[RMDB]
RNA sequence: GGGAACGACUCGAGUAGAGUCGAAAAGAACGCCACUUCGGUGGCGUUCGAAGAUCUACCACACGUAGAUCACUAUCGUGUGAGACAUCGAUAGAUGUCAAAUGGUCCGGAAGUUCGCUUCCGGAAACGUCUCACUAGCAUUCGUGCUAGUGAGACGAAAAGAAACAACAACAACAAC
Reactivity to DMS in 0.01 (KOAc 150mM, MgCl2 10mM, bicine 150mM(pH8.5), 24C), signal-to-noise 2, nucleotides 027 to 126: g000a030a020c010g010c000c000a000c000u000u050c160g000g000u000g030g000c030g050u000u000c000g000a060a120g010a070u000c050u000a080c020c080a050c110a060c150g000u000a010g000a140u000c300a140c090u000a010u000c060g010u030g010u010g020a290g020a020c020a030u000c000g000a170u000a060g000a020u010g020u000c030a120a070a130u000g000g000u000c000c000g000g000a010a000g020u000u010c190g000c020u000u000c000c000g000g000a000a020a070
Reactivity to 2A3 in 0.01 (KOAc 150mM, MgCl2 10mM, bicine 150mM(pH8.5), 24C), signal-to-noise 1, nucleotides 027 to 126: g020a000a000c000g050c020c000a000c000u040u080c220g130g000u030g000g000c050g000u000u000c010g000a010a000g030a010u000c020u040a100c030c040a040c030a000c090g060u020a010g050a130u170c040a030c060u100a060u250c080g000u010g020u000g050a140g000a020c010a010u020c010g050a030u170a240g010a000u040g030u000c000a000a120a060u140g130g020u000c010c000g000g020a000a000g020u030u240c200g040c160u000u000c000c000g000g000a000a000a000
Structure probing data (DMS and 2A3) for a 177-nucleotide construct. DMS adducts were read by reverse transcription with MarathonRT. 2A3 adducts were read by reverse transcription with SuperScript II with manganese. The RNA was probed in 150 mM KOAc, 10 mM MgCl2 and 150 mM bicine (pH 8.5) at 24 C. Reactivities are given for positions 27 through 126. For 2A3, 1,074 sequencing reads were counted.